Conditions: 150 mM KOAc, 10 mM MgCl2 and 150 mM bicine (pH 8.5), 24 C.
The record gives the reactivity of an RNA of 177 nucleotides to 2A3 and DMS.
The data come from the RNA Mapping Database (RMDB), library TTRDES.
For DMS, 2,620 sequencing reads were counted.
2A3 adducts were read by reverse transcription with SuperScript II with manganese.
RNA sequence: GGGAACGACUCGAGUAGAGUCGAAAAGAUAUGGAUCCCAUAAGGGAGUCGUCCAUCGGAAACGAUGGGCGACUUUGAUCUUACUAGGGAUCCUAAGUCAAAACACAUACGCUUCGGCGUAUGUGAACGACAUAGCAUACUUCGGUAUGCUAUGUCGAAAAGAAACAACAACAACAAC
Reactivity to 2A3 in 0.01 (KOAc 150mM, MgCl2 10mM, bicine 150mM(pH8.5), 24C), signal-to-noise 1, nucleotides 027 to 126: g000a010u060a010u100g000g000a000u000c000c010c000a010u040a000a000g050g020g010a050g020u010c000g000u000c000c000a010u000c000g030g040a050a060a100c040g000a010u050g030g000g010c000g000a010c000u010u010u000g000a010u010c000u020u030a060c110u240a170g000g000g000a000u020c000c000u000a070a010g000u000c040a040a020a240a070c000a000c000a010u020a010c000g000c000u040u100c270g290g000c030g000u020a000u030g020u010g000a020a000
Reactivity to DMS in 0.01 (KOAc 150mM, MgCl2 10mM, bicine 150mM(pH8.5), 24C), signal-to-noise 3, nucleotides 027 to 126: g000a060u000a300u010g000g010a000u000c000c010c010a300u000a010a010g010g000g010a010g030u000c000g020u000c010c000a000u000c060g030g000a130a080a160c000g020a000u000g000g000g010c000g010a000c010u020u000u020g000a110u010c000u000u000a030c300u030a150g010g020g000a000u010c000c000u000a010a100g010u000c030a100a090a110a220c020a010c000a000u000a000c000g010c010u000u000c260g030g010c000g020u000a000u000g000u000g010a060a130